[RMDB]
RNA sequence: GGGAACGACUCGAGUAGAGUCGAAAAGAUAUGGACUCUUGUAGGGAGCUACCGGUCGGAAACGACCGAGUAGCGACGAUCUACUGGAGUCCUAAGUCAAAGCGAUCAUCGUUCGCGAUGAUCGCAACAUACUAAUAUAGUUCGCUAUAUUAGUAUGAAAAGAAACAACAACAACAAC
Reactivity to DMS in 0.01 (KOAc 150mM, MgCl2 10mM, bicine 150mM(pH8.5), 24C), signal-to-noise 5, nucleotides 027 to 126: g000a030u000a140u010g000g000a020c010u000c000u000u000g020u000a010g000g010g010a050g020c000u000a000c010c010g000g010u000c010g020g000a030a030a080c000g020a010c000c000g000a050g010u000a010g010c000g010a050c300g000a060u000c000u000a010c000u000g000g000a020g020u000c000c000u000a000a040g000u010c020a120a140a140g020c000g000a020u010c000a010u000c000g020u000u010c250g040c010g010a000u000g000a000u000c010g020c010a020a050
Reactivity to 2A3 in 0.01 (KOAc 150mM, MgCl2 10mM, bicine 150mM(pH8.5), 24C), signal-to-noise 4, nucleotides 027 to 126: g010a000u020a010u090g000g000a000c000u010c020u040u050g010u010a010g030g040g080a110g010c000u000a000c000c000g000g000u010c000g000g020a040a020a010c000g000a010c010c000g010a010g000u000a000g010c010g030a020c030g010a050u000c000u010a010c020u030g020g000a000g000u000c000c000u000a000a000g000u000c020a020a130a110g000c000g000a000u010c000a010u010c000g100u140u140c300g020c000g160a010u010g000a010u000c000g000c000a000a000

Background: An RNA of 177 nucleotides, treated with DMS and 2A3 and read out base by base. The data come from the RNA Mapping Database (RMDB), library TTRDES. 2A3 adducts were read by reverse transcription with SuperScript II with manganese. In probing experiments dimethyl sulfate is read out at A N1 and C N3, which are open when not base-paired.